[RMDB]
RNA sequence: GGGAACGACUCGAGUAGAGUCGAAAAUGGUCACCCACAUGAGAUAAUCUUGUACUAUUAUGAGCUGUACCCCACUAUGACUGUAGUCAUUGUGUCGGUGGCCUCGUUCGUGCUUCUGUCGAUGGUGUAACGUGCUCUCGUUCGCGAGAGCACGUUAAAAAGAAACAACAACAACAAC
Reactivity to DMS in 0.01 (KOAc 150mM, MgCl2 10mM, bicine 150mM(pH8.5), 24C), signal-to-noise 1, nucleotides 027 to 126: u000g020g000u010c040a080c010c020c100a100c140a150u000g030a070g000a070u020a080a090u000c040u000u000g040u010a040c140u000a070u000u020a080u010g000a070g010c070u010g010u000a080c020c010c010c000a120c130u030a020u000g000a010c020u020g020u010a120g030u010c030a020u000u000g000u000g050u020c180g040g000u000g010g000c030c000u000c060g000u020u000c070g030u000g000c060u020u010c030u010g010u000c010g000a090u000g000g020u000g010
Reactivity to 2A3 in 0.01 (KOAc 150mM, MgCl2 10mM, bicine 150mM(pH8.5), 24C), signal-to-noise 1, nucleotides 027 to 126: u040g030g020u040c050a050c000c050c000a020c080a020u110g030a070g050a090u100a150a120u080c070u070u110g010u010a020c050u000a010u260u070a090u140g050a000g050c030u030g030u150a080c030c000c010c000a010c070u030a010u040g000a000c000u160g050u210a060g010u010c000a020u050u000g040u010g010u020c010g020g040u030g060g040c010c020u000c010g030u030u030c010g000u050g010c050u000u120c000u040g060u020c040g030a030u040g010g090u060g050

Chemical mapping of a 177-nucleotide RNA with DMS and 2A3.
For DMS the reverse transcriptase was MarathonRT.
For 2A3 the reverse transcriptase was SuperScript II with manganese.
The RNA was probed in 150 mM KOAc, 10 mM MgCl2 and 150 mM bicine (pH 8.5) at 24 C.